Chemical mapping of a 177-nucleotide RNA with DMS and 2A3. The RNA was probed in 150 mM KOAc, 10 mM MgCl2 and 150 mM bicine (pH 8.5) at 24 C. In probing experiments dimethyl sulfate is read out at A N1 and C N3, which are open when not base-paired. For 2A3, 1,427 sequencing reads were counted. Reactivities are given for positions 27 through 126.
RNA sequence: GGGAACGACUCGAGUAGAGUCGAAAAUGUGUGCCUGCACAGGCUGUAUGUCCAAGGAGCUGGUCCUAGGGCAGGACUAAGGUUCAGGCUUCGUAUUGACUUCCAUGACCAAGCAUCCUGGGUCCAGAAACGCAUACCAGUUCGCUGGUAUGCGUUUAAAAGAAACAACAACAACAAC
Reactivity to DMS in 0.01 (KOAc 150mM, MgCl2 10mM, bicine 150mM(pH8.5), 24C), signal-to-noise 3, nucleotides 027 to 126: u010g020u000g000u000g020c000c010u010g010c130a060c060a070g000g010c060u010g030u000a050u010g010u010c010c040a080a120g010g000a110g020c070u000g030g000u000c010c030u000a100g010g000g020c080a060g010g000a050c070u010a060a100g000g000u000u010c060a060g000g000c110u010u000c130g010u010a070u000u000g010a090c100u000u010c050c020a100u010g000a060c030c060a030a070g010c050a130u000c020c000u000g010g010g010u000c030c060a080g000
Reactivity to 2A3 in 0.01 (KOAc 150mM, MgCl2 10mM, bicine 150mM(pH8.5), 24C), signal-to-noise 1, nucleotides 027 to 126: u070g030u000g050u050g020c000c000u040g010c080a060c010a040g020g100c040u020g090u090a110u080g080u000c050c010a140a050g020g020a060g020c060u040g060g060u030c030c010u060a080g000g100g000c040a040g000g050a030c030u080a090a070g130g000u150u060c030a000g090g000c040u070u070c110g070u060a130u010u130g060a120c000u120u000c030c040a090u050g020a030c000c010a040a000g020c000a120u060c000c000u060g000g000g000u020c000c000a020g040